Source: RMDB library TTRDEL, as collected in RNAgym. Structure probing data (2A3 and DMS) for a 177-nucleotide construct. 2A3 adducts were read by reverse transcription with SuperScript II with manganese. The DMS profile rests on 1,107 reads. For 2A3, 2,185 sequencing reads were counted. Reactivities are given for positions 27 through 126. High 2A3 reactivity points to a flexible backbone, as in loops and unpaired stretches. Conditions: 150 mM KOAc, 10 mM MgCl2 and 150 mM bicine (pH 8.5), 24 C. DMS adducts were read by reverse transcription with MarathonRT.
[RMDB]
RNA sequence: GGGAACGACUCGAGUAGAGUCGAAAAGAUAUGGAUUUCUGUGCCAGUCUGUCAUCGGAAACGAUGAGAGACGGUAAUACAGAUGUCCUAAGUCAAACUCGAAAGACUGUUCGCAGUCUUUCGAGAAGUAUUGGUGUGGGUUCGCCCACACCAAUACAAAAGAAACAACAACAACAAC
Reactivity to 2A3 in 0.01 (KOAc 150mM, MgCl2 10mM, bicine 150mM(pH8.5), 24C), signal-to-noise 1, nucleotides 027 to 126: g030a030u040a010u130g000g000a010u020u010u060c030u020g010u000g020c090c040a170g030u000c000u000g300u030c000a010u000c000g000g040a040a080a050c010g010a000u000g020a010g000a000g000a040c000g030g020u130a080a030u090a050c000a000g010a000u040g000u000c000c010u020a050a020g040u020c030a030a090a140c000u000c000g000a010a010a000g020a020c000u020g050u110u090c300g000c180a000g020u020c000u010u010u000c000g020a000g000a010a030
Reactivity to DMS in 0.01 (KOAc 150mM, MgCl2 10mM, bicine 150mM(pH8.5), 24C), signal-to-noise 1, nucleotides 027 to 126: g010a020u000a240u010g000g010a000u000u000u000c000u000g010u000g010c040c040a180g020u000c000u000g000u000c000a000u000c000g020g000a060a060a220c010g020a010u000g010a000g000a000g010a020c010g000g020u000a040a170u000a170c000a030g000a030u010g000u000c000c000u000a040a150g010u000c020a080a210a140c000u000c000g000a010a000a000g000a010c000u000g010u000u010c270g010c000a010g010u000c000u000u000u000c010g000a010g010a030a040